[RMDB]
RNA sequence: GGGAACGACUCGAGUAGAGUCGAAAAGAACGGUCAUACGAGGCGGCGUAGACCGGAAAGAGCCGCCGAGAAAGAAAGAAAGCUACGGCGUGGCCUCGCUCGUAGCGAAAGAAGGCCGAGAAAGAAAGGAUAUGAGUAUCUUCGGAUACUCAUAUCCAAAAGAAACAACAACAACAAC
Reactivity to DMS in 0.01 (KOAc 150mM, MgCl2 10mM, bicine 150mM(pH8.5), 24C), signal-to-noise 6, nucleotides 027 to 126: g010a180a090c010g010g010u000c000a120u040a110c040g000a280g010g000c000g000g000c000g010u020a110g000a130c090c050g000g000a030a080a150g000a230g010c010c000g030c000c000g000a140g010a080a110a090g010a090a120a120g000a110a070a120g010c000u000a010c000g000g000c000g000u010g000g010c110c050u010c000g000c000u060c010g010u010a010g000c000g000a010a070a080g000a290a070g000g010c000c000g000a130g010a080a100a110g010a070a130a100
Reactivity to 2A3 in 0.01 (KOAc 150mM, MgCl2 10mM, bicine 150mM(pH8.5), 24C), signal-to-noise 5, nucleotides 027 to 126: g090a090a020c020g000g010u010c020a010u070a180c040g020a030g020g000c000g010g000c020g050u080a050g020a130c040c080g000g010a050a060a010g040a010g010c030c020g000c030c040g010a010g010a000a040a000g110a040a100a020g080a050a090a010g000c000u000a000c000g000g040c020g020u080g090g110c040c090u050c020g000c000u120c040g000u000a000g000c010g000a010a000a010g040a040a030g000g000c020c030g010a020g070a040a120a010g120a080a050a030